RNA sequence: GGGAACGACUCGAGUAGAGUCGAAAAGAUAUGGAGUGUGCUUUUGACGCCUUCCCGUUCGGAAACGAACGCAGGCGAUAAGCCACUCCUAAGUCAAAAGGUUGAGAGUCUUCGGACUCUCAACCAAGCUGAUAAAUACGUUCGCGUAUUUAUCAGCAAAAGAAACAACAACAACAAC
Reactivity to DMS in 0.01 (KOAc 150mM, MgCl2 10mM, bicine 150mM(pH8.5), 24C), signal-to-noise 4, nucleotides 027 to 126: g000a030u000a300u010g000g010a010g010u000g020u010g030c000u000u000u000u000g010a190c080g010c000c000u000u010c090c220c000g010u000u000c010g000g000a100a130a190c010g000a020a020c010g100c160a010g000g010c000g010a070u010a020a020g000c020c000a010c010u000c010c000u000a000a080g010u000c040a070a050a150a100g000g010u000u010g000a010g010a020g000u000c000u000u000c170g040g000a010c000u000c010u000c000a000a000c010c010a000a010
Reactivity to 2A3 in 0.01 (KOAc 150mM, MgCl2 10mM, bicine 150mM(pH8.5), 24C), signal-to-noise 4, nucleotides 027 to 126: g040a020u060a060u160g000g020a010g010u020g040u220g020c000u070u130u150u200g230a160c030g020c010c000u010u010c010c010c000g010u000u010c020g000g020a100a090a080c020g000a000a000c000g040c090a010g020g000c000g010a010u010a030a010g000c000c010a000c000u000c000c000u000a020a000g040u010c020a020a030a110a130g010g000u000u010g000a000g000a020g000u000c000u070u140c300g050g000a000c000u000c000u000c010a010a000c000c000a000a000